This 177-nucleotide RNA was probed chemically with DMS. DMS adducts were read by reverse transcription with MarathonRT. Conditions: 150 mM KOAc, 10 mM MgCl2 and 150 mM bicine (pH 8.5), 24 C.

RNA sequence: GGGAACGACUCGAGUAGAGUCGAAAAUACGCGCACACGGGCACCGCGCCGUACGCGGACGUGCUGCUGCCCGCGGCGACGUGGGGCGAGAAGGAAGGCACGGUGACGAACUCCGAGCGGCGCAUCACUAGUCAGCAGCAUUCGUGCUGCUGACUAGAAAAGAAACAACAACAACAAC
Reactivity to DMS in 0.01 (KOAc 150mM, MgCl2 10mM, bicine 150mM(pH8.5), 24C), signal-to-noise 1, nucleotides 027 to 126: u010a100c080g000c040g030c010a080c060a070c000g020g020g000c030a100c020c090g000c010g000c020c020g040u000a010c140g040c020g000g000a100c010g020u010g060c080u020g010c090u110g020c030c000c000g010c000g000g000c140g030a080c000g000u000g000g030g010g030c010g030a150g000a120a120g000g060a160a120g000g000c080a090c000g060g030u000g020a090c080g000a130a170c170u000c010c010g000a120g060c080g040g000c100g030c070a080u000c150a170